[RMDB]
RNA sequence: GGGAACGACUCGAGUAGAGUCGAAAAGAUAUGGAGCGUGUAGAUUAAUCAGGUCUCCCCACCUCGGAAACGAGAGGACCUGAAAGCUUAUUACCGCUCCUAAGUCAAAGGUGUCUUCGGACACCAACAUUCUACAAGACUUCGGUCUUGUAGAAUGAAAAGAAACAACAACAACAAC
Reactivity to 2A3 in 0.01 (KOAc 150mM, MgCl2 10mM, bicine 150mM(pH8.5), 24C), signal-to-noise 6, nucleotides 027 to 126: g020a010u080a050u170g010g000a010g020c070g020u290g030u230a050g060a300u090u200a090a130u070c010a010g000g030u010c030u050c010c000c000c010a090c010c010u000c010g020g030a090a040a030c010g000a010g010a000g020g020a000c010c000u000g030a020a020a000g040c060u140u120a060u150u050a300c000c010g010c010u000c010c000u010a070a010g060u030c080a190a070a050g000g000u020g000u000c010u040u120c300g130g000a010c000a000c000c000a000a000
Reactivity to DMS in 0.01 (KOAc 150mM, MgCl2 10mM, bicine 150mM(pH8.5), 24C), signal-to-noise 5, nucleotides 027 to 126: g010a050u010a300u010g000g000a020g010c000g030u020g010u010a060g010a050u000u000a090a170u000c000a000g010g000u000c020u000c050c010c010c040a300c070c020u000c010g000g000a110a050a170c010g000a010g000a160g010g010a010c000c000u000g000a010a030a060g010c200u000u000a050u000u000a010c030c020g000c000u000c000c010u010a020a080g000u000c060a070a100a130g010g020u000g000u000c010u000u010c160g030g000a020c000a000c000c010a070a110